Annotation:
The data come from the RNA Mapping Database (RMDB), library TTRDES. An RNA of 177 nucleotides, treated with DMS and 2A3 and read out base by base.
RNA sequence: GGGAACGACUCGAGUAGAGUCGAAAAAAAGAUAUGGAUCUAGAACUACUCCUGCGUAUAUGGCGUUUGACGGAAUUCGGAAACGAAUUCCCGAGCCAUAUGAUCAGGAGCUAGAUCCUAAGUCAAACUUAAUCACGAUGUUCGCAUCGUGAUUAAGAAAAGAAACAACAACAACAAC
Reactivity to DMS in 0.01 (KOAc 150mM, MgCl2 10mM, bicine 150mM(pH8.5), 24C), signal-to-noise 3, nucleotides 027 to 126: a080a120a050g010a060u000a300u000g000g000a000u010c000u000a010g000a100a020c080u030a300c000u000c000c010u000g010c210g000u000a010u000a000u000g000g000c000g000u020u000u010g020a260c300g000g000a030a000u000u000c000g000g010a130a060a210c000g000a010a010u000u000c000c000c000g010a050g020c000c000a000u010a000u000g000a090u000c010a010g010g000a010g000c000u010a000g010a020u000c000c000u000a020a080g000u010c020a110a090a190
Reactivity to 2A3 in 0.01 (KOAc 150mM, MgCl2 10mM, bicine 150mM(pH8.5), 24C), signal-to-noise 2, nucleotides 027 to 126: a000a000a000g070a060u110a060u200g010g010a000u000c010u000a010g000a070a100c110u240a070c000u300c000c010u010g020c040g040u160a000u000a000u040g000g030c030g060u160u290u250g040a040c040g000g000a000a000u010u010c010g020g060a070a090a070c010g000a010a020u000u000c000c000c010g010a000g000c000c000a010u020a010u010g000a040u060c000a000g020g040a000g000c010u000a000g000a000u000c000c000u020a060a020g010u000c030a000a010a160
DMS (dimethyl sulfate) methylates the pairing face of unpaired adenines and cytosines.
The RNA was probed in 150 mM KOAc, 10 mM MgCl2 and 150 mM bicine (pH 8.5) at 24 C.
Values cover nucleotides 27 to 126.